[RMDB]
RNA sequence: GGGAACGACUCGAGUAGAGUCGAAAAAGGGCGAGGGCGAUGUCCACGGUGGGCAGCAGGACGGCGUAGUUGGUUGAGAUGAUCCUGGCGAGCGUGUUCACCACCUCGGCCGGCGUCGGUGCGGCGGACUCAAGCAAUGUUUCGACAUUGCUUGAGUAAAAGAAACAACAACAACAAC
Reactivity to 2A3 in 0.01 (KOAc 150mM, MgCl2 10mM, bicine 150mM(pH8.5), 24C), signal-to-noise 6, nucleotides 027 to 126: a000g080g010g010c040g030a070g000g030g010c050g030a040u070g020u030c030c030a030c080g040g040u110g020g050g010c010a030g010c010a020g020g050a020c020g020g030c020g030u070a070g040u080u080g080g030u030u070g040a050g010a080u130g010a030u050c010c030u040g010g010c010g000a020g010c110g010u020g040u070u120c080a040c050c000a020c010c010u040c000g110g000c010c000g000g000c010g020u050c020g000g050u080g050c030g000g030c000g010g010
Reactivity to DMS in 0.01 (KOAc 150mM, MgCl2 10mM, bicine 150mM(pH8.5), 24C), signal-to-noise 5, nucleotides 027 to 126: a060g010g010g010c020g010a110g010g000g030c050g020a070u010g010u010c040c060a090c100g000g020u020g000g000g010c050a070g010c070a040g000g000a080c040g010g000c050g000u000a040g000u000u010g010g010u010u020g010a120g010a080u010g000a090u020c120c040u020g010g010c010g000a040g010c130g000u000g000u010u030c150a110c200c020a050c050c000u000c030g010g000c020c020g000g010c080g000u010c030g000g010u010g000c040g020g010c040g000g000

The record gives the reactivity of an RNA of 177 nucleotides to 2A3 and DMS.
For DMS, 17,511 sequencing reads were counted.
Reactivities are rounded to 0.1 and cut off at 0 and 3.
2A3 adducts were read by reverse transcription with SuperScript II with manganese.
For 2A3, 7,222 sequencing reads were counted.
Conditions: 150 mM KOAc, 10 mM MgCl2 and 150 mM bicine (pH 8.5), 24 C.